The record gives the reactivity of an RNA of 170 nucleotides to 2A3 and DMS. 2A3 adducts were read by reverse transcription with SuperScript II with manganese. The data come from the RNA Mapping Database (RMDB), library 15KLIB. Conditions: 150 mM KOAc, 10 mM MgCl2 and 150 mM bicine (pH 8.5), 24 C. The DMS profile rests on 7,261 reads.

[RMDB]
RNA sequence: GGGAACGACUCGAGUAGAGUCGAAAAAUGCCAAAGAGGUGGGGAUCGUCGGAAGGUAUCGUCCCAAUGACCAAGAGAAGGGAAGAAACGGAAGCCUUUCCCCUUGACGCCGGUGAAACUCUGGAAUAGACGAGGUGCUUCGGCACCUCGAAAAGAAACAACAACAACAAC
Reactivity to 2A3 in 0.01 (KOAc 150mM, MgCl2 10mM, bicine 150mM(pH8.5), 24C), signal-to-noise 2, nucleotides 027 to 129: a000u110g010c050c010a110a050a000g030a010g030g000u060g000g010g000g020a080u060c050g040u030c000g060g040a000a060g000g010u100a020u160c040g000u030c000c000c000a010a050u150g050a050c000c010a070a020g010a010g000a130a030g000g030g030a000a070g040a030a050a000c010g000g020a000a000g020c030c000u000u020u000c000c000c070c000u030u050g030a010c040g000c000c000g020g000u030g020a040a020a020c000u030c000u080g020g080a040a030u040a040g060a020
Reactivity to DMS in 0.01 (KOAc 150mM, MgCl2 10mM, bicine 150mM(pH8.5), 24C), signal-to-noise 3, nucleotides 027 to 129: a220u040g020c090c050a030a120a060g000a060g000g000u020g040g020g060g000a030u030c000g030u040c100g010g000a010a010g020g030u030a040u040c000g000u050c000c020c000a110a190u000g000a120c000c000a100a050g020a030g000a080a070g020g020g000a070a020g050a030a060a050c140g060g020a260a140g020c030c050u010u000u100c020c000c000c090u090u010g090a140c140g030c070c000g050g020u100g010a050a040a150c070u020c050u010g000g000a070a070u110a050g000a110